[RMDB]
RNA sequence: GGGAACGACUCGAGUAGAGUCGAAAAUUUCCCUCAGGAUAGCAGCAACUUAUUUACGAUAGUUUUAUGAGGUAAAGCGAAUGAUUAGAGGAUUCGGGGAAGAAACUUCCUCGACCUAUUCUCAAACUUGAGGUACGUAAUUCGUUACGUACCUCAAAAAAGAAACAACAACAACAAC
Reactivity to 2A3 in 0.01 (KOAc 150mM, MgCl2 10mM, bicine 150mM(pH8.5), 24C), signal-to-noise 1, nucleotides 027 to 126: u010u010u000c000c000c000u000c030a010g030g020a030u080a100g020c050a000g010c000a010a000c010u030u010a020u020u040u050a040c040g070a110u160a090g020u150u000u030u000a010u040g020a020g040g050u190a120a010a000g030c020g030a010a000u100g080a050u060u050a090g010a020g180g000a000u160u000c000g020g020g020g000a000a000g010a050a160a060c120u030u020c000c000u000c000g000a000c000c000u020a050u040u000c010u010c030a150a100a030c050
Reactivity to DMS in 0.01 (KOAc 150mM, MgCl2 10mM, bicine 150mM(pH8.5), 24C), signal-to-noise 4, nucleotides 027 to 126: u010u020u000c010c000c000u000c120a080g020g010a090u010a070g000c050a060g020c170a100a090c060u020u000a040u000u000u020a040c050g000a110u010a130g000u020u020u000u010a000u000g020a080g000g020u010a040a180a060g010c050g000a130a070u020g010a060u010u010a070g010a010g020g000a080u030u000c020g020g010g000g000a010a010g010a150a090a130c090u000u010c000c000u000c010g000a000c300c080u020a020u000u000c000u000c030a100a150a090c210
Source information:
Conditions: 150 mM KOAc, 10 mM MgCl2 and 150 mM bicine (pH 8.5), 24 C. This 177-nucleotide RNA was probed chemically with 2A3 and DMS. It was measured as part of the RMDB libraries RFM100 and RFMREP. Reactivities are given for positions 27 through 126.